[RMDB]
RNA sequence: GGGAACGACUCGAGUAGAGUCGAAAAGCUGUUAUGAAGACCGAUUGACGUGGUUGGGUGAAGCUGCACAACACGUGGAACCCGCUUUGAAACGGUGGUUGUUUGAUGUUAAACAGUUAACGCCUCAUAUACAUGAUCUCUUCGGAGAUCAUGUAUAAAAAGAAACAACAACAACAAC
Reactivity to 2A3 in 0.01 (KOAc 150mM, MgCl2 10mM, bicine 150mM(pH8.5), 24C), signal-to-noise 1, nucleotides 027 to 126: g010c000u010g060u150u030a170u260g140a150a030g050a000c010c040g130a300u090u040g040a060c060g010u090g080g070u230u300g180g000g040u020g020a100a000g020c040u000g030c040a040c040a160a060c030a020c120g000u040g000g010a000a010c020c020c010g000c010u050u040u120g130a110a060a030c000g000g000u040g030g040u070u060g070u070u230u090g100a050u050g040u050u260a110a040a010c030a020g000u000u050a120a060c080g020c040c000u020c030a070
Reactivity to DMS in 0.01 (KOAc 150mM, MgCl2 10mM, bicine 150mM(pH8.5), 24C), signal-to-noise 5, nucleotides 027 to 126: g030c020u000g000u000u010a100u000g020a100a140g010a040c030c020g010a100u000u000g020a180c160g030u010g000g010u000u020g040g000g000u000g010a300a140g010c060u000g010c040a070c230a050a080c050a050c180g000u000g020g010a150a050c060c010c010g010c050u000u000u000g010a140a060a050c120g020g010u000g010g000u000u000g010u000u000u000g020a140u010g010u000u000a060a050a050c060a020g000u000u010a040a110c190g000c020c010u010c190a120